The record gives the reactivity of an RNA of 177 nucleotides to DMS and 2A3. It was measured as part of the RMDB library TTRDES. The RNA was probed in 150 mM KOAc, 10 mM MgCl2 and 150 mM bicine (pH 8.5) at 24 C. For 2A3 the reverse transcriptase was SuperScript II with manganese.
RNA sequence: GGGAACGACUCGAGUAGAGUCGAAAAGAUAUGGAAUCCACAAACCACGGAUGUGUAGUCGGAAACGACUACCAUCUUCUUUGAGGAUUCCUAAGUCAAACUGAGCGAUUCUUCGGAAUCGCUCAGAUCUUCUUUAUCAGUUCGCUGAUAAAGAAGAAAAAGAAACAACAACAACAAC
Reactivity to DMS in 0.01 (KOAc 150mM, MgCl2 10mM, bicine 150mM(pH8.5), 24C), signal-to-noise 6, nucleotides 027 to 126: g000a010u010a150u020g000g020a030a000u010c000c000a220c010a010a010a030c300c300a080c270g000g000a010u000g000u010g020u000a010g020u000c000g020g010a030a040a070c000g010a010c000u000a000c000c000a000u000c000u000u000c070u000u000u010g010a090g000g000a000u000u010c000c000u010a010a080g000u000c010a150a170a270c010u000g000a000g000c000g000a010u000u000c010u000u030c220g010g000a020a010u000c000g000c000u000c000a000g000a050
Reactivity to 2A3 in 0.01 (KOAc 150mM, MgCl2 10mM, bicine 150mM(pH8.5), 24C), signal-to-noise 5, nucleotides 027 to 126: g010a010u010a000u050g010g000a000a010u010c010c000a020c020a040a050a060c240c230a300c300g130g010a010u010g190u130g000u050a010g020u000c010g000g000a030a010a000c000g000a000c000u010a000c000c000a000u020c010u070u030c040u030u000u010g050a070g000g000a000u000u000c000c000u000a030a000g000u000c030a070a050a170c010u010g000a010g000c000g000a000u020u000c010u060u100c300g100g010a010a000u000c010g000c020u000c000a000g000a000